[RMDB]
The record gives the reactivity of an RNA of 177 nucleotides to 2A3 and DMS.
For 2A3 the reverse transcriptase was SuperScript II with manganese.
The data come from the RNA Mapping Database (RMDB), library OK2TRN.
The reactions ran in a buffer of 150 mM KOAc, 10 mM MgCl2 and 150 mM bicine (pH 8.5), at 24 C.
RNA sequence: GGGAACGACUCGAGUAGAGUCGAAAAGACUUUGGGAACUACUGCGACUCAAAAGGUUAUUUAUAUAAUGCUGCUGUUGCUCAUAGCUCCAGCCUAUGGCAGUCAAUGUUCUAGUCUGGACAAACGCACGUCUUGAAGUAUUCGUACUUCAAGACGUAAAAGAAACAACAACAACAAC
Reactivity to 2A3 in 0.01 (KOAc 150mM, MgCl2 10mM, bicine 150mM(pH8.5), 24C), signal-to-noise 4, nucleotides 027 to 126: g020a010c090u090u140u100g050g000g030a060a010c020u100a040c030u150g090c040g070a020c030u020c140a070a040a030a060g030g010u080u020a090u080u270u030a240u040a010u030a160a110u110g050c020u010g020c020u020g010u110u040g000c010u030c080a100u120a060g020c040u010c010c010a000g000c030c020u070a080u120g060g000c000a000g040u110c060a140a220u070g000u090u070c000u010a020g020u010c010u020g000g000a020c050a050a130a020c070g030c030
Reactivity to DMS in 0.01 (KOAc 150mM, MgCl2 10mM, bicine 150mM(pH8.5), 24C), signal-to-noise 6, nucleotides 027 to 126: g000a070c040u000u010u010g020g000g010a090a050c050u000a080c080u000g010c020g020a140c050u000c050a060a070a150a110g010g010u000u000a060u000u010u010a110u020a070u010a110a050u000g010c020u000g000c040u000g020u000u000g010c010u020c140a140u020a060g020c090u000c020c000a020g010c030c030u000a180u000g000g000c000a020g010u000c220a080a100u000g000u000u000c040u000a020g010u000c020u010g000g000a050c160a050a050a110c240g010c160